[RMDB]
RNA sequence: GGGAACGACUCGAGUAGAGUCGAAAAGAUGAAUUUCGGACAUCGUGGCGUCAAUCAACCGGUCCGAGAUCUCGAUAGUGGCAAGGUCGUCAUGACAACGCAAAAUCAUGGAUAUACUGUUGGUGACCCUGGUGAGACACUCAAUGUAUGUCAAAUAAUCUCGUUGAUGGUUCGCCAUCAACGAGAUAAAAGAAACAACAACAACAAC
Reactivity to 2A3 in 0.01 (KOAc 150mM, MgCl2 10mM, bicine 150mM(pH8.5), 24C), signal-to-noise 1, nucleotides 027 to 156: g010a000u240g000a140a140u000u060u040c000g000g030a010c000a090u130c130g190u100g020g140c090g100u100c240a150a150u130c050a030a030c030c030g000g000u000c000c000g000a000g010a020u000c010u010c010g010a010u070a180g050u030g060g000c010a140a040g150g000u050c090g000u030c000a000u030g060a000c060a110a020c070g080c090a070a110a100a000u130c060a070u210g000g100a000u000a090u000a170c030u040g010u100u000g000g000u040g000a090c080c060c000u010g000g080u060g040a030g000a000c000a040c000u040c000a000a060u040g030u150a040u030g000u000c000a210a000a000u300a040
Structure probing data (2A3) for a 207-nucleotide construct. 2A3 adducts were read by reverse transcription with SuperScript II with manganese. The RNA was probed in 150 mM KOAc, 10 mM MgCl2 and 150 mM bicine (pH 8.5) at 24 C.